[RMDB]
RNA sequence: GGGAACGACUCGAGUAGAGUCGAAAACGCGUGCGGAUGCCGGUCGUCAGCUCGAGCUGAUUGGUCGCGCCGUGCGUGGACGCGACCGUAUAGCCGCCGUGCAGGCGCAUGUAGUCGCCGGCGAGGAGACGCUGGCUACGUUCGCGUAGCCAGCGUCAAAAGAAACAACAACAACAAC
Reactivity to DMS in 0.01 (KOAc 150mM, MgCl2 10mM, bicine 150mM(pH8.5), 24C), signal-to-noise 1, nucleotides 027 to 126: c040g000c020g000u000g000c060g000g000a070u000g020c110c020g000g000u010c010g010u000c000a030g030c020u010c230g010a170g010c000u220g000a050u010u000g040g000u010c010g020c030g000c010c000g000u020g000c040g040u000g000g040a020c080g010c000g000a060c010c020g040u020a090u010a070g000c020c040g020c030c010g020u000g010c050a080g010g010c000g010c050a070u000g030u000a100g010u000c020g020c010c020g000g000c000g000a090g010g000a170
Reactivity to 2A3 in 0.01 (KOAc 150mM, MgCl2 10mM, bicine 150mM(pH8.5), 24C), signal-to-noise 1, nucleotides 027 to 126: c020g000c000g000u020g000c020g000g040a120u080g040c140c010g000g030u060c020g000u010c020a020g030c030u120c130g090a080g000c000u040g040a030u100u220g000g010u000c000g030c010g020c030c000g000u030g000c000g020u060g010g030a020c030g040c020g030a030c000c030g050u120a080u070a110g070c090c040g000c050c020g080u170g070c120a130g010g010c010g000c030a070u140g130u150a000g020u030c000g010c010c000g020g020c030g010a080g020g040a100